RNA sequence: GGGAACGACUCGAGUAGAGUCGAAAAACCUCUUGUCCAGGGAGGCUCUGGGAACUGGCCAGGUUCAGAACUCAACAUCAUUGCAGUCAGAAUCAUGCUGUGUGAUGUGUUCUCUACUCCAGAUGCUAUUUGCUAGAUUGGGAAAUUAGCAAAGCUACUCAUACUAAAUCUUCGGAUUUAGUAUGAGAAAAGAAACAACAACAACAAC
Reactivity to DMS in 0.01 (KOAc 150mM, MgCl2 10mM, bicine 150mM(pH8.5), 24C), signal-to-noise 4, nucleotides 027 to 156: a040c010c010u000c020u000u010g000u000c110c080a160g010g000g020a090g020g030c020u000c050u000g010g020g010a080a170c020u000g020g020c090c080a090g000g010u010u000c020a060g010a040a030c050u000c030a150a130c010a000u000c000a020u000u000g080c000a030g010u010c070a160g020a160a160u010c150a140u010g010c000u000g020u000g030u000g000a030u000g020u000g000u000u000c020u000c040u000a040c030u000c060c020a080g000a150u000g010c030u000a090u000u000u000g000c020u000a060g030a140u000u000g010g000g000a110a060a070u010u000a050g020c050a030a040a070g010c040u000a110
Reactivity to 2A3 in 0.01 (KOAc 150mM, MgCl2 10mM, bicine 150mM(pH8.5), 24C), signal-to-noise 9, nucleotides 027 to 156: a010c010c000u020c020u040u070g050u020c030c030a040g020g020g020a050g040g020c030u020c020u040g040g000g020a050a030c010u020g020g010c030c070a060g050g000u120u160c050a020g010a030a010c020u050c130a050a030c000a020u020c000a010u040u300g010c000a010g080u190c030a040g190a200a210u210c090a120u210g010c000u000g000u000g000u000g010a000u000g010u000g010u060u010c040u000c020u060a080c030u020c010c020a020g010a080u080g010c010u070a140u170u030u010g000c000u010a020g010a160u030u050g110g040g010a020a070a040u050u030a010g000c000a010a030a010g030c020u090a040